Notes:
An RNA of 177 nucleotides, treated with 2A3 and DMS and read out base by base. The reactions ran in a buffer of 150 mM KOAc, 10 mM MgCl2 and 150 mM bicine (pH 8.5), at 24 C. For DMS, 2,086 sequencing reads were counted.
[RMDB]
RNA sequence: GGGAACGACUCGAGUAGAGUCGAAAAAUUCAGGAGAGUAGAUGAUUCGCGUUAAGUGUGUGUGAUUGGGAUGUCGUCACACAACGAAGCGAGAGCGCGGUGAAUCAUUGCAUCCGCUCCAAACGAAGAGCAUUAUGAGGUUCGCCUCAUAAUGCUCAAAAGAAACAACAACAACAAC
Reactivity to 2A3 in 0.01 (KOAc 150mM, MgCl2 10mM, bicine 150mM(pH8.5), 24C), signal-to-noise 1, nucleotides 027 to 126: a000u090u060c040a040g000g020a010g000a010g000u020a000g000a000u020g000a000u000u000c010g010c020g010u030u100a050a010g010u030g000u000g000u010g000u000g040a010u020u000g040g020g010a000u030g040u060c060g010u010c010a000c000a000c000a010a000c010g030a030a000g000c030g010a030g020a000g050c020g010c010g040g040u000g000a000a000u000c010a010u000u000g000c010a010u000c000c000g000c010u000c000c040a040a050a010c100g030a090a090
Reactivity to DMS in 0.01 (KOAc 150mM, MgCl2 10mM, bicine 150mM(pH8.5), 24C), signal-to-noise 2, nucleotides 027 to 126: a130u000u000c100a130g000g010a020g000a020g000u000a260g000a020u000g000a020u000u010c020g030c000g020u000u020a040a100g010u000g000u000g020u000g000u010g020a000u000u010g010g000g000a020u000g000u000c220g000u010c000a010c000a000c010a000a020c120g000a100a040g050c050g010a210g000a170g010c010g020c050g010g050u000g000a010a020u000c010a000u000u000g020c040a030u000c020c010g000c000u000c010c000a090a060a130c200g000a090a110